[RMDB]
RNA sequence: GGGAACGACUCGAGUAGAGUCGAAAACGUCGUGAACUAGCGACAAUGCGGUAGGUCCAUCGUUAUCUAACCGAAACAUCGUGACUAGUCGUAGAAUAGAACCAGGAGAGGCCGCUGGCAAACAAAGACGGGGUGUUUUAUUCGUGGGGCGCCCCGUAAAAGAAACAACAACAACAAC
Reactivity to DMS in 0.01 (KOAc 150mM, MgCl2 10mM, bicine 150mM(pH8.5), 24C), signal-to-noise 9, nucleotides 027 to 126: c100g000u010c020g010u010g010a130a060c080u010a080g000c060g010a060c040a100a050u020g010c010g010g010u010a070g010g010u000c040c050a100u020c110g000u020u020a070u010c070u020a080a080c060c040g000a090a090a130c070a040u010c070g010u010g000a100c020u000a060g000u010c020g000u010a070g000a050a080u020a070g010a090a110c020c020a040g010g010a090g000a090g000g010c020c040g010c040u000g000g010c090a090a060a060c080a060a100a100g010
Reactivity to 2A3 in 0.01 (KOAc 150mM, MgCl2 10mM, bicine 150mM(pH8.5), 24C), signal-to-noise 9, nucleotides 027 to 126: c040g010u010c010g030u030g060a100a060c030u020a040g010c000g030a020c030a010a040u120g020c010g000g020u050a050g020g040u030c040c040a200u110c170g070u090u040a090u050c030u040a030a120c010c010g010a040a010a020c020a030u040c040g040u040g040a040c010u020a030g020u020c020g030u040a020g030a080a030u080a040g020a020a020c010c000a010g020g030a060g010a020g010g030c000c000g000c030u010g010g000c020a010a060a040c020a020a130a000g100